[RMDB]
RNA sequence: GGGAACGACUCGAGUAGAGUCGAAAAGCUGCCUCUGACGUCCUUCUCCCCCGGAAACGGGGCCGAAGGGUGGUAAAGCGCGUCGCCUGGCGCUCGCACGGGUAUGCGUGGCGGUCGACCCUGGCCGCAUUACCUACCACUUCGGUGGUAGGUAAUGAAAAGAAACAACAACAACAAC
Reactivity to DMS in 0.01 (KOAc 150mM, MgCl2 10mM, bicine 150mM(pH8.5), 24C), signal-to-noise 9, nucleotides 027 to 126: g010c010u000g000c010c000u000c210u000g010a170c040g000u000c000c000u000u000c010u000c300c000c000c000c010g010g000a080a070a200c010g020g000g010g030c050c060g000a010a010g000g000g020u010g010g010u000a070a120a110g010c060g010c010g010u000c070g020c100c100u000g010g010c020g020c020u000c050g010c030a080c150g000g000g010u000a030u010g020c010g020u000g010g000c010g000g010u000c010g010a180c020c010c010u000g000g000c010c010g010
Reactivity to 2A3 in 0.01 (KOAc 150mM, MgCl2 10mM, bicine 150mM(pH8.5), 24C), signal-to-noise 5, nucleotides 027 to 126: g010c010u020g020c000c000u080c090u100g070a030c000g020u000c000c000u010u000c010u030c010c000c000c000c000g000g020a010a020a000c010g000g000g000g000c000c010g010a000a000g000g000g000u020g000g030u120a100a080a040g030c020g000c010g040u050c040g100c070c130u130g040g000c020g000c040u060c070g070c020a080c060g010g000g040u050a050u300g020c050g020u050g050g020c000g010g000u010c020g050a140c000c000c000u010g030g000c020c000g000

The record gives the reactivity of an RNA of 177 nucleotides to DMS and 2A3. Conditions: 150 mM KOAc, 10 mM MgCl2 and 150 mM bicine (pH 8.5), 24 C. DMS adducts were read by reverse transcription with MarathonRT. Reactivities are given for positions 27 through 126. The 2A3 profile rests on 17,984 reads. The data come from the RNA Mapping Database (RMDB), library OK2TRN.